[RMDB]
Overview:
Chemical mapping of a 207-nucleotide RNA with 2A3 and DMS. 2A3 adducts were read by reverse transcription with SuperScript II with manganese. It was measured as part of the RMDB library OK3TST. For 2A3, 1,795 sequencing reads were counted. The RNA was probed in 150 mM KOAc, 10 mM MgCl2 and 150 mM bicine (pH 8.5) at 24 C. The DMS profile rests on 5,280 reads.
RNA sequence: GGGAACGACUCGAGUAGAGUCGAAAAUAAAUGAAAUUUGGUAGUUUUAACUGAAUAAUGUAGAAUAAAGUUAUGAUUAUUGACAAGAUAACAAUAGAUCAUGUGGAAAUAUCUAGUCGAGGCAUUCACUGCAGAGAGGUGUAGACCCCUCAGUCUACAUAUAGGUAAUAUUCGUAUUACCUAUAUGAAAAGAAACAACAACAACAAC
Reactivity to 2A3 in 0.01 (KOAc 150mM, MgCl2 10mM, bicine 150mM(pH8.5), 24C), signal-to-noise 2, nucleotides 027 to 156: u070a000a050a020u040g030a070a070a090u100u050u020g020g030u030a080g030u070u050u060u170a050a040c050u070g040a030a020u120a090a010u070g050u100a050g040a050a050u140a110a130a020g020u030u060a030u060g030a040u010u040a020u040u080g020a020c030a070a100g030a080u110a140a020c010a100a020u020a050g150a050u090c020a040u100g040u050g110g030a060a070a000u080a030u030c040u030a040g060u060c030g010a020g010g030c010a000u050u030c060a030c100u030g020c020a000g020a000g000a010g050g040u060g000u040a020g040a040c050c010c000c000u020c030a020g050u010c020u030a040
Reactivity to DMS in 0.01 (KOAc 150mM, MgCl2 10mM, bicine 150mM(pH8.5), 24C), signal-to-noise 3, nucleotides 027 to 156: u010a070a100a100u010g000a060a090a120u000u000u010g020g030u010a070g020u000u010u010u000a030a130c040u020g010a150a100u000a070a080u010g000u020a100g020a080a100u010a100a100a100g010u000u000a030u000g010a120u000u010a050u000u010g010a100c070a080a120g020a110u000a070a120c040a050a080u000a070g020a030u000c020a040u000g030u000g020g010a080a090a090u000a050u000c040u000a090g010u000c060g010a060g020g010c030a070u010u010c050a030c050u000g030c060a140g010a080g020a040g010g020u000g010u000a080g010a100c020c020c010c040u000c020a090g020u010c020u000a140